Chemical mapping of a 207-nucleotide RNA with DMS and 2A3.
[RMDB]
RNA sequence: GGGAACGACUCGAGUAGAGUCGAAAACAUUAAUAGGGACAGGAAUUGCCAGGCCACUAGAGUUUCACUUUCUCUUCUACAUUCCCCUUUCCUUUCCUGCUUUUGGGCAUAGGGGAGCAUUUGUUUGUUUUGUAUACAUAUCUCUUAUCUCUGCCUAGAAACAUGAUAUUUUCGAAUAUCAUGUUUCAAAAGAAACAACAACAACAAC
Reactivity to DMS in 0.01 (KOAc 150mM, MgCl2 10mM, bicine 150mM(pH8.5), 24C), signal-to-noise 1, nucleotides 027 to 156: c050a110u000u010a100a130u020a120g000g000g060a080c080a070g020g030a070a070u010u020g000c040c050a080g020g020c100c030a030c080u010a070g030a050g010u000u000u000c050a080c090u000u000u000c010u000c020u000u010c040u010a060c060a180u010u000c010c000c000c050u010u000u010c020c000u010u000u000c030c030u000g000c090u010u000u000u000g020g020g010c070a040u000a100g000g000g020g000a030g050c110a050u000u000u010g020u000u000u000g020u000u000u000u010g010u000a090u020a030c040a090u000a070u010c020u000c020u000u000a060u000c020u010c060u000g020c030c020u000a190
Reactivity to 2A3 in 0.01 (KOAc 150mM, MgCl2 10mM, bicine 150mM(pH8.5), 24C), signal-to-noise 3, nucleotides 027 to 156: c020a020u190u300a150a120u120a180g030g010g030a030c030a060g040g060a050a080u070u030g040c050c030a030g030g000c070c050a030c080u080a020g000a020g080u020u120u130c050a030c040u060u100u020c040u010c000u090u040c020u050a080c030a120u040u070c010c000c000c030u000u020u030c000c000u000u070u050c010c010u050g040c060u120u100u110u100g020g000g000c000a040u060a010g010g000g010g000a020g000c010a030u000u000u160g060u080u060u100g100u090u100u050u110g060u100a120u030a130c010a020u080a060u050c010u000c000u100u040a090u060c030u020c060u060g010c020c010u090a090

Description: Conditions: 150 mM KOAc, 10 mM MgCl2 and 150 mM bicine (pH 8.5), 24 C. DMS adducts were read by reverse transcription with MarathonRT. Values are in units of 0.01, from 0 to 300, in steps of 10.